[RMDB]
RNA sequence: GGGAACGACUCGAGUAGAGUCGAAAAACAGAAAAAAGGAGUUUAAAUUAGAUUUGCAAACGGACGGUACUAAAUACCGUCACUUUUACGUCUAACUUAUCGUUAACUCUGCAAAAAGGAAACAAGAAAAACAAGCGUGAGUUCGCUCACGCUUGAAGUCUAUUGAAAACUUCGGUUUUCAAUAGACAAAAGAAACAACAACAACAAC
Reactivity to DMS in 0.01 (KOAc 150mM, MgCl2 10mM, bicine 150mM(pH8.5), 24C), signal-to-noise 1, nucleotides 027 to 156: a160c030a110g000a000a120a170a030a140a160g000g010a060g000u010u010u000a000a010a050u000u000a020g010a000u000u000u000g060c060a010a030a010c270g020g000a040c010g090g000u000a060c000u000a050a030a300u040a000c000c010g000u000c030a010c000u010u010u000u000a010c010g000u000c000u030a010a030c040u000u000a000u000c070g060u030u000a040a010c030u000c000u010g030c210a020a060a000a070a000g030g000a080a060a010c010a060a090g000a030a060a180a110a100c010a020a000g090c010g080u000g000a040g030u000u010c300g010c000u030c050a030c000g000c000u000u000g000a000a090
Reactivity to 2A3 in 0.01 (KOAc 150mM, MgCl2 10mM, bicine 150mM(pH8.5), 24C), signal-to-noise 2, nucleotides 027 to 156: a000c020a030g170a040a070a000a020a000a050g020g000a020g030u100u090u100a050a040a020u040u020a010g020a010u050u040u250g070c060a040a030a010c030g030g010a000c000g000g020u020a040c070u220a030a120a090u050a000c000c000g000u010c000a040c000u000u010u020u060a010c020g010u000c000u020a000a060c040u010u110a070u110c000g040u030u000a000a000c010u010c010u080g010c120a050a030a020a020a090g140g040a120a090a040c100a070a140g080a030a090a030a000a000c010a010a000g000c000g010u000g000a010g000u000u100c090g000c040u000c010a000c000g000c010u000u000g000a010a010